RNA sequence: GGGAACGACUCGAGUAGAGUCGAAAAGAAAGAAAAGAAGAAACCUCUCGUCAAGAAAGACGUGAGGAACAAUUCCGAGCCCAAGUAUGCCAAGCGCGGGUGGCAUAGAAAAGAAAGAAAAAGAAAACAUCCUAGCUAUAUUCGUAUAGCUAGGAUGAAAAGAAACAACAACAACAAC
Reactivity to DMS in 0.01 (KOAc 150mM, MgCl2 10mM, bicine 150mM(pH8.5), 24C), signal-to-noise 3, nucleotides 027 to 126: g000a160a120a090g020a080a050a110a160g020a040a080g000a100a110a060c020c010u000c010u010c000g000u000c020a070a150g050a160a180a130g020a000c010g000u000g000a000g010g020a180a060c090a100a140u000u000c010c040g010a080g040c000c000c010a100a100g010u010a010u010g010c010c000a020a040g000c060g000c030g010g000g050u000g010g000c020a040u010a010g000a040a030a060a060g030a080a070a090g020a070a060a070a120a100g010a100a050a080a170
Reactivity to 2A3 in 0.01 (KOAc 150mM, MgCl2 10mM, bicine 150mM(pH8.5), 24C), signal-to-noise 3, nucleotides 027 to 126: g040a010a040a010g100a020a100a010a010g150a030a010g050a010a090a030c000c000u000c010u020c010g000u030c010a070a200g070a270a220a000g000a090c000g000u000g000a000g000g000a010a000c000a000a030u040u000c030c020g020a020g030c000c010c000a020a000g080u010a010u030g010c000c010a030a040g060c010g020c050g040g050g000u010g010g030c000a010u020a040g230a040a100a020a020g180a060a070a010g130a060a100a020a020a000g170a040a070a010a000